An RNA of 177 nucleotides, treated with 2A3 and DMS and read out base by base. High DMS reactivity at an A or C suggests that its Watson-Crick edge is free.

[RMDB]
RNA sequence: GGGAACGACUCGAGUAGAGUCGAAAAGGUUAAGAGCAUAGGGCACUUUACCUCUGAAACAAUGAGGUGCAUUAAACCCGCAAGGUUUGGUGUUCAUGAUGAAAGGUCAGGUUGGUUCGUACCCAUUAUUUCGAUUAAGGUUCGCCUUAAUCGAAAUAAAAGAAACAACAACAACAAC
Reactivity to 2A3 in 0.01 (KOAc 150mM, MgCl2 10mM, bicine 150mM(pH8.5), 24C), signal-to-noise 1, nucleotides 027 to 126: g030g000u080u060a100a000g050a010g000c030a070u150a110g050g040g040c020a000c040u090u020u020a010c000c000u040c000u020g050a140a000a010c020a030a080u150g000a000g000g000u000g000c010a010u000u090a010a020a010c040c020c040g010c060a000a020g000g000u020u040u050g040g010u020g000u040u070c050a060u100g070a040u080g040a090a090a000g010g020u040c040a010g020g060u060u060g000g030u000u010c020g000u040a070c000c010c000a010u050u010
Reactivity to DMS in 0.01 (KOAc 150mM, MgCl2 10mM, bicine 150mM(pH8.5), 24C), signal-to-noise 3, nucleotides 027 to 126: g030g000u000u010a060a090g010a070g010c020a060u010a080g000g010g010c050a060c040u000u030u000a020c020c020u010c010u020g000a090a110a100c220a100a100u000g000a050g000g030u000g020c060a050u010u010a010a020a030c000c000c070g000c300a170a300g000g010u000u000u000g010g010u000g000u010u000c100a110u000g010a040u010g000a090a070a060g020g010u010c020a040g000g010u000u000g000g010u010u010c070g020u000a080c000c000c010a160u000u000